[RMDB]
RNA sequence: GGGAACGACUCGAGUAGAGUCGAAAAGAUAUGGAGUGGCGGAGGAACUACACUCGUGCCUCGGAAACGAGGCCGAGUGCCGUAGAUGCCACUCCUAAGUCAAAACUCCACACUUCGGUGUGGAGAACCCACAAGAAGACUUCGGUCUUCUUGUGGGAAAAGAAACAACAACAACAAC
Reactivity to DMS in 0.01 (KOAc 150mM, MgCl2 10mM, bicine 150mM(pH8.5), 24C), signal-to-noise 1, nucleotides 027 to 126: g010a010u000a300u000g010g010a020g010u000g000g000c000g000g000a070g000g020a100a050c080u020a300c030a030c000u000c000g030u000g040c000c000u000c010g030g000a130a060a200c010g000a000g010g010c010c010g000a000g000u000g030c000c060g000u000a090g000a200u000g000c000c000a010c000u010c000c000u000a000a060g030u030c000a090a070a110a150c010u000c000c000a000c000a030c010u000u010c220g010g000u010g030u000g010g000a000g020a030a080
Reactivity to 2A3 in 0.01 (KOAc 150mM, MgCl2 10mM, bicine 150mM(pH8.5), 24C), signal-to-noise 1, nucleotides 027 to 126: g010a010u060a050u140g000g000a000g000u020g000g030c040g010g020a010g060g010a110a090c120u230a060c240a000c010u000c020g050u300g010c000c000u030c000g000g010a080a060a020c020g000a000g000g000c000c000g000a000g000u000g000c000c000g060u140a010g000a010u050g020c000c000a000c000u000c000c010u010a000a010g030u000c020a010a000a070a120c010u000c020c010a000c000a010c020u070u140c300g080g010u000g010u000g000g000a000g010a010a000
Conditions: 150 mM KOAc, 10 mM MgCl2 and 150 mM bicine (pH 8.5), 24 C. The record gives the reactivity of an RNA of 177 nucleotides to DMS and 2A3. The 2A3 profile rests on 2,053 reads. Reactivities are given for positions 27 through 126.